[RMDB]
RNA sequence: GGGAACGACUCGAGUAGAGUCGAAAAUAUUUUGAGCUCUUUAGAGGGCAACACAAAGGGCUGGGUUGCCUUGAUUAAAAAUGGCAGUUAACUGGGAGAGAUUUAUUCAGUUCAAUUUAAAUGGUGGGAUAUAUCCGUACUUCGGUACGGAUAUAUCAAAAGAAACAACAACAACAAC
Reactivity to 2A3 in 0.01 (KOAc 150mM, MgCl2 10mM, bicine 150mM(pH8.5), 24C), signal-to-noise 1, nucleotides 027 to 126: u050a050u000u000u080u130g040a040g010c000u000c000u030u160u100a180g030a050g170g000g000c000a000a000c010a020c000a060a090a020g100g030g000c000u060g070g030g000u000u040g010c000c000u040u010g050a080u060u210a180a090a110a020a000u020g000g000c040a010g030u040u070a070a060c030u040g020g020g000a020g010a020g000a040u080u090u110a150u050u230c020a020g040u010u070c000a050a040u000u120u150a020a100a050u120g070g020u040g070g060
Reactivity to DMS in 0.01 (KOAc 150mM, MgCl2 10mM, bicine 150mM(pH8.5), 24C), signal-to-noise 3, nucleotides 027 to 126: u000a060u000u000u000u000g000a130g000c030u000c060u010u010u020a110g020a080g000g010g000c030a030a030c100a050c100a040a100a120g010g010g030c120u000g020g010g010u000u000g010c020c010u010u000g010a100u010u020a020a040a060a090a060u020g010g020c010a050g000u010u000a050a090c120u020g000g000g000a100g010a130g010a100u010u000u010a040u010u010c100a040g020u000u000c040a040a070u000u000u000a040a070a070u010g000g030u000g010g000

Conditions: 150 mM KOAc, 10 mM MgCl2 and 150 mM bicine (pH 8.5), 24 C.
Chemical mapping of a 177-nucleotide RNA with 2A3 and DMS.
For DMS the reverse transcriptase was MarathonRT.
2A3 adducts were read by reverse transcription with SuperScript II with manganese.
Reactivities are given for positions 27 through 126.